[RMDB]
RNA sequence: GGGAACGACUCGAGUAGAGUCGAAAAAAGCUCAUUUUCGAAUGAGCUUGAAGCGUGAACGCAGGAUAACGCAGAAACGCGCCGCUGAACCUCGCAAGCGAAAGAUUAAGGUCUUCGGACCUUAAAAAGGAAAGGAUUAAUUCGUUAAUCCUUUCCUAAAAGAAACAACAACAACAAC
Reactivity to DMS in 0.01 (KOAc 150mM, MgCl2 10mM, bicine 150mM(pH8.5), 24C), signal-to-noise 7, nucleotides 027 to 126: a020a010g010c000u010c000a020u000u000u000u010c140g030a030a010u000g000a010g000c000u000u000g000a090a090g010c010g010u000g010a120a170c140g020c040a080g000g010a120u010a120a110c090g000c010a060g000a140a110a050c060g020c040g020c080c030g020c030u010g010a080a090c030c010u000c050g010c060a100a080g010c040g010a090a080a080g010a160u010u000a010a000g010g000u000c000u000u010c180g030g000a010c000c000u000u000a000a010a050a090
Reactivity to 2A3 in 0.01 (KOAc 150mM, MgCl2 10mM, bicine 150mM(pH8.5), 24C), signal-to-noise 4, nucleotides 027 to 126: a000a000g010c020u020c010a020u030u000u030u060c110g090a030a000u000g000a010g000c000u000u020g010a030a000g010c010g020u040g040a080a010c040g000c050a030g100g110a180u110a240a020c060g000c030a010g090a020a060a010c010g020c000g020c040c000g020c030u030g020a100a090c010c010u020c040g010c050a050a030g020c010g060a120a040a000g080a010u040u060a000a000g000g000u000c000u010u080c220g090g000a000c000c000u000u000a010a020a000a000
Chemical mapping of a 177-nucleotide RNA with DMS and 2A3. 2A3 adducts were read by reverse transcription with SuperScript II with manganese. The DMS profile rests on 9,426 reads. DMS adducts were read by reverse transcription with MarathonRT. The RNA was probed in 150 mM KOAc, 10 mM MgCl2 and 150 mM bicine (pH 8.5) at 24 C. As a SHAPE reagent, 2A3 marks flexible, mostly unpaired nucleotides at the ribose 2'-OH.